[RMDB]
RNA sequence: GGGAACGACUCGAGUAGAGUCGAAAACAUUGACGAUUUUGCACGGCAACUCAUUGCGGACAAAUGCAGCGCUCUCAUCGAAUCGUCCGACAUGUUGCCAUUCAACAAUCUCGCCAUGCUCAAAACCGUGCGCGACGAAUACUUUAAAAACCCCACGGAGAAGAUUACAAUUCGUUGUAAUCUUCUCAAAAGAAACAACAACAACAAC
Reactivity to DMS in 0.01 (KOAc 150mM, MgCl2 10mM, bicine 150mM(pH8.5), 24C), signal-to-noise 1, nucleotides 027 to 156: c050a110u010u010g050a050c000g000a060u000u000u000u000g010c030a110c280g010g040c020a060a020c040u010c050a190u000u000g010c060g050g030a040c020a080a050a080u020g030c080a120g020c080g010c060u010c040u000c030a160u010c020g020a080a100u010c090g000u000c020c020g030a300c050a090u000g020u000u000g000c000c030a160u000u010c020a040a040c020a040a020u000c070u000c000g010c000c020a020u000g000c040u000c000a050a090a050a090c030c000g030u000g010c030g020c040g000a090c030g000a100a070u010a090c070u010u010u000a070a120a060a080a090c050c000c000c000a070c300g020
Reactivity to 2A3 in 0.01 (KOAc 150mM, MgCl2 10mM, bicine 150mM(pH8.5), 24C), signal-to-noise 5, nucleotides 027 to 156: c040a050u060u130g050a030c050g030a030u000u050u030u160g050c070a030c070g010g000c000a020a010c010u050c110a100u060u230g040c000g010g010a010c030a030a110a030u190g050c060a070g040c040g000c050u020c010u020c060a120u070c060g080a130a120u070c060g010u000c010c000g060a070c010a050u070g010u000u000g000c020c000a000u030u030c000a020a030c010a020a030u010c020u010c030g000c010c000a030u060g020c020u110c150a090a130a080a110c060c020g000u010g010c090g020c020g050a030c020g040a060a040u050a120c000u100u170u220a050a130a060a040a040c020c020c000c010a030c040g020